Source: RMDB library TTRINS, as collected in RNAgym. The record gives the reactivity of an RNA of 177 nucleotides to DMS. The DMS profile rests on 770 reads. Conditions: 150 mM KOAc, 10 mM MgCl2 and 150 mM bicine (pH 8.5), 24 C. Reactivities are given for positions 27 through 126.
RNA sequence: GGGAACGACUCGAGUAGAGUCGAAAAGAUAUGGAGACAGACAUGGCUGUAGAGUCAAUGAUGCAUGCAGGCUCGGAAACGAGCCUGCAUGUUGAGACUCCGAAGGCCAACAGCUGUCUCCUAAGUCCACCUACACAUGGUUCGCCAUGUGUAGGUGAAAAGAAACAACAACAACAAC
Reactivity to DMS in 0.01 (KOAc 150mM, MgCl2 10mM, bicine 150mM(pH8.5), 24C), signal-to-noise 1, nucleotides 027 to 126: g000a050u000a300u010g000g000a050g010a010c000a010g010a030c120a300u020g030g030c030u010g010u000a280g010a020g020u000c000a300a220u010g010a090u000g000c020a020u000g000c000a040g010g050c020u000c000g020g010a030a200a300c000g030a000g070c030c000u000g020c000a010u000g000u000u000g000a060g000a000c010u000c020c040g000a040a300g010g000c020c010a020a090c300a070g020c000u000g000u000c000u000c000c020u010a000a070g000u000c040